[RMDB]
RNA sequence: GGGAACGACUCGAGUAGAGUCGAAAAAAUGGCACUGCAGAGCUGAUGGGCCAUGUACCUAUCCAAAAUGAGAUCCCAUCUUGCACACUGUGCUAAUUUGAGAUUCUCAUGCCUCCUACUUGAAGAGACCGCAUGCCCAGCUUCGGCUGGGCAUGAAGAAUAUUAGUUCGUUCGCGAACUAAUAUUCAAAAGAAACAACAACAACAAC
Reactivity to 2A3 in 0.01 (KOAc 150mM, MgCl2 10mM, bicine 150mM(pH8.5), 24C), signal-to-noise 3, nucleotides 027 to 156: a010a010u060g010g020c010a000c060u070g020c090a050g010a040g130c060u050g010a050u060g020g000g000c010c010a020u050g040u070a100c010c010u070a100u140c070c090a110a080a050a080u060g020a090g010a150u060c000c000c000a000u000c010u030u130g010c010a020c020a010c100u170g000u020g020c020u070a080a130u020u030u040g050a060g020a070u260u030c020u010c050a030u150g020c000c010u020c000c010u050a090c030u050u100g050a070a060g020a030g000a060c080c010g010c020a000u000g000c010c020c000a000g000c000u050u030c110g100g020c000u010g000g000g000c000a000u000g010a000a010
Reactivity to DMS in 0.01 (KOAc 150mM, MgCl2 10mM, bicine 150mM(pH8.5), 24C), signal-to-noise 3, nucleotides 027 to 156: a060a040u000g000g010c000a140c030u000g010c020a140g030a130g030c040u010g000a090u010g000g000g040c050c000a090u000g000u000a100c060c020u000a100u000c060c110a060a050a150a080u000g000a040g000a070u000c010c000c000a060u000c060u010u000g010c010a050c040a160c120u000g010u010g020c010u000a010a080u010u000u020g010a090g000a100u000u000c010u000c020a070u000g020c040c000u000c030c000u010a050c060u000u000g010a100a120g000a090g010a180c040c060g000c010a020u000g000c000c000c000a040g000c000u000u000c300g050g000c000u000g000g020g010c000a000u000g000a020a080